[RMDB]
RNA sequence: GGGAACGACUCGAGUAGAGUCGAAAACAUUACGAAUUCAGUUGCAAAUUGUAGAAUUAGCUACUCUACGAUUUAGUGAGCGUUAGUAACGUUGUAAUAUAAUAUAGUCUUUGGAAGGAUUAUAUUGGAGCCGCGGACAAGUUCGCUUGUCCGCGAAGUCGAAUAAGUACUUCGGUACUUAUUCGACAAAAGAAACAACAACAACAAC
Reactivity to 2A3 in 0.01 (KOAc 150mM, MgCl2 10mM, bicine 150mM(pH8.5), 24C), signal-to-noise 2, nucleotides 027 to 156: c010a030u120u100a050c050g080a100a100u150u190c020a050g050u080u050g030c020a010a000a010u000u000g010u000a000g000a040a010u020u050a050g020c020u080a020c010u000c000u000a000c000g030a020u000u000u120a090g000u040g100a010g060c030g000u050u060a050g000u080a090a040c040g000u000u020g030u060a100a060u100a110u020a110a020u010a000u000a010g000u020c040u090u140u150g150g040a070a080g060g000a000u000u000a010u000a020u000u030g020g050a090g110c100c000g000c000g000g000a000c000a000a000g010u010u060c110g000c160u000u000g030u010c000c000g000c000g030a000a000

Record summary:
Source: RMDB library M2RFPK, as collected in RNAgym. Structure probing data (2A3) for a 207-nucleotide construct. The 2A3 profile rests on 1,078 reads. Reactivities are given for positions 27 through 156.